[RMDB]
RNA sequence: GGGAACGACUCGAGUAGAGUCGAAAAGAUAUGGACCUAUACUAGCUUUUGACGGACCGUGCUCGGAAACGAGCACGUGUCCGAUAAGCUAAUAGGUCCUAAGUCAAAGAGCUCGUUCGCGAGCUCACCCUAAAGCUCAGUUCGCUGAGCUUUAGGGAAAAGAAACAACAACAACAAC
Reactivity to 2A3 in 0.01 (KOAc 150mM, MgCl2 10mM, bicine 150mM(pH8.5), 24C), signal-to-noise 3, nucleotides 027 to 126: g000a020u040a020u060g000g000a000c000c000u000a010u070a080c270u020a060g040c040u190u250u300u300g300a300c070g010g000a010c000c000g010u000g000c000u010c000g040g000a050a050a030c010g000a000g000c010a000c010g000u000g010u000c000c000g000a000u000a010a000g010c000u010a020a010u000a000g000g000u010c000c000u000a000a000g000u020c020a100a000a210g000a000g000c020u000c020g050u170u150c300g010c070g160a010g000c000u000c020a030
Reactivity to DMS in 0.01 (KOAc 150mM, MgCl2 10mM, bicine 150mM(pH8.5), 24C), signal-to-noise 2, nucleotides 027 to 126: g010a030u000a280u000g010g010a010c000c010u000a010u000a160c300u000a000g010c010u020u000u010u000g000a220c080g000g010a030c000c000g020u000g000c000u000c000g010g000a090a030a110c000g010a020g030c000a000c000g000u010g010u000c000c000g020a010u010a010a000g010c010u010a030a040u000a000g020g010u000c000c000u000a000a080g000u000c020a080a090a130g000a000g010c010u000c000g030u000u000c270g000c020g010a020g010c000u000c000a030
Structure probing data (2A3 and DMS) for a 177-nucleotide construct. The DMS profile rests on 2,570 reads. Values cover nucleotides 27 to 126.